[RMDB]
RNA sequence: GGGAACGACUCGAGUAGAGUCGAAAAUAGAUAAGAGAUUUCGGUGUGGAUGUGGUGUUGGUGUAGUGUAGAAGAGAUGCGGGUGUCUUGUACAUACCCUCAUCGUCUAAUCGAUACUCUUACUCCAAUAAGGGUCAGAAUUCGUUCUGACCCUUAUAAAAGAAACAACAACAACAAC
Reactivity to DMS in 0.01 (KOAc 150mM, MgCl2 10mM, bicine 150mM(pH8.5), 24C), signal-to-noise 4, nucleotides 027 to 126: u040a040g000a130u010a060a060g000a050g000a140u010u000u010c040g020g030u000g030u030g000g010a020u000g030u040g030g020u010g000u020u010g000g000u010g000u000a030g010u020g020u010a060g010a080a030g000a080g010a020u010g000c160g010g000g010u000g000u000c020u010u030g010u020a110c240a020u000a030c020c000c000u000c000a000u000c010g000u020c030u010a100a060u010c070g000a080u010a050c010u000c020u010u000a020c040u020c030c040a090
Reactivity to 2A3 in 0.01 (KOAc 150mM, MgCl2 10mM, bicine 150mM(pH8.5), 24C), signal-to-noise 2, nucleotides 027 to 126: u100a020g140a040u060a040a000g000a010g080a220u050u100u050c010g030g000u020g100u210g000g030a070u050g070u170g090g050u030g010u090u080g000g040u120g020u040a090g090u080g030u020a010g020a030a010g070a000g020a030u090g150c110g040g050g000u050g040u030c020u020u060g040u030a010c000a040u060a000c000c020c000u000c000a020u030c020g080u030c000u020a020a000u000c000g010a010u010a040c000u010c000u030u040a020c020u000c000c010a020
An RNA of 177 nucleotides, treated with DMS and 2A3 and read out base by base.
For 2A3, 866 sequencing reads were counted.
The RNA was probed in 150 mM KOAc, 10 mM MgCl2 and 150 mM bicine (pH 8.5) at 24 C.
The data come from the RNA Mapping Database (RMDB), library OK1LIB.
DMS adducts were read by reverse transcription with MarathonRT.
The DMS profile rests on 10,044 reads.
Values are in units of 0.01, from 0 to 300, in steps of 10.